[RMDB]
RNA sequence: GGGAACGACUCGAGUAGAGUCGAAAAGUUCGACCGUUCGCGGUCGAACAAAAUAAAACAGUACAUAGCCUCGCGAAAGCGUUGUACUGAAAGGCUAUGAAAAAACGAUAUGGUUCGCCAUAUCGAACGGUGUAAAGUACUUCGGUACUUUACACCGAAAAGAAACAACAACAACAAC
Reactivity to 2A3 in 0.01 (KOAc 150mM, MgCl2 10mM, bicine 150mM(pH8.5), 24C), signal-to-noise 1, nucleotides 027 to 126: g000u000u000c010g010a000c030c010g010u060u040c270g000c000g180g030u000c000g000a000a000c000a000a020a000a000u030a000a020a010a010c030a000g080u080a020c000a000u010a010g040c000c000u000c020g000c020g070a080a030a020g000c040g070u080u160g100u090a070c060u050g070a120a040a000g020g020c020u030a050u080g000a140a090a000a030a010a000c010g000a000u000a000u010g010g060u010u030c180g000c050c000a000u000a000u010c000g020a050a000
Reactivity to DMS in 0.01 (KOAc 150mM, MgCl2 10mM, bicine 150mM(pH8.5), 24C), signal-to-noise 1, nucleotides 027 to 126: g010u000u000c010g010a000c000c000g030u020u010c210g000c040g020g040u000c000g030a000a020c010a010a060a120a010u000a030a040a250a140c030a050g000u000a080c010a010u000a030g030c000c010u000c080g010c030g000a080a110a130g020c000g010u010u020g000u000a060c020u000g000a070a050a090g000g010c020u000a020u000g000a000a090a050a050a130a050c050g000a010u020a000u020g000g010u010u010c300g040c000c000a020u000a000u000c000g010a020a040
Structure probing data (2A3 and DMS) for a 177-nucleotide construct. For 2A3, 1,842 sequencing reads were counted. Reactivities are given for positions 27 through 126. For DMS, 1,131 sequencing reads were counted. The data come from the RNA Mapping Database (RMDB), library M2PK50.